[RMDB]
RNA sequence: GGGAACGACUCGAGUAGAGUCGAAAACGAAAUGAGGGUACCUGACGAACGAUCCAUAUGGUUACGAGCGUCGCCGCCCAAGGCCGAGCGGCGUCAGACGAGGUAGGGUAUCCGCGCCUCUGUCUUCAUGGAGCAGUUCGAGGCAAUGGCGCUUCAACUAAACCAUAGCUUUCGAGCUAUGGUUUAGAAAAGAAACAACAACAACAAC
Reactivity to 2A3 in 0.01 (KOAc 150mM, MgCl2 10mM, bicine 150mM(pH8.5), 24C), signal-to-noise 2, nucleotides 027 to 156: c040g060a010a040a070u260g000a040g010g010g020u030a000c030c010u030g040a030c070g000a060a020c090g030a040u000c030c050a070u140a110u300g070g020u090u160a100c070g010a010g030c010g000u020c000g000c030c010g020c020c000c070a130a090g000g020c140c040g000a070g010c000g000g020c030g040u020c050a010g010a100c040g030a010g050g000u050a010g040g000g000u110a030u050c020c000g000c020g000c000c010u020c090u120g010u000c000u030u020c070a090u090g150g000a020g010c130a060g090u080u130c060g020a000g000g000c000a000a080u090g030g000c050g000c000u100u080c020a050a080
Reactivity to DMS in 0.01 (KOAc 150mM, MgCl2 10mM, bicine 150mM(pH8.5), 24C), signal-to-noise 1, nucleotides 027 to 156: c030g000a070a150a180u000g010a120g000g000g040u000a020c010c020u010g010a240c090g020a080a060c000g020a150u000c020c010a040u000a160u000g030g000u010u020a200c100g010a300g040c030g000u000c010g030c000c030g020c040c020c040a070a040g000g000c060c030g010a110g020c010g000g010c000g000u000c020a070g000a020c060g010a040g030g060u000a270g020g020g040u010a040u000c010c060g020c050g010c000c000u000c080u020g030u000c020u000u000c100a080u010g030g020a060g000c030a070g030u000u000c050g000a170g000g060c110a060a040u000g000g020c060g000c000u010u000c010a040a180
The record gives the reactivity of an RNA of 207 nucleotides to 2A3 and DMS.
Values cover nucleotides 27 to 156.
Reactivities are rounded to 0.1 and cut off at 0 and 3.
The RNA was probed in 150 mM KOAc, 10 mM MgCl2 and 150 mM bicine (pH 8.5) at 24 C.
DMS adducts were read by reverse transcription with MarathonRT.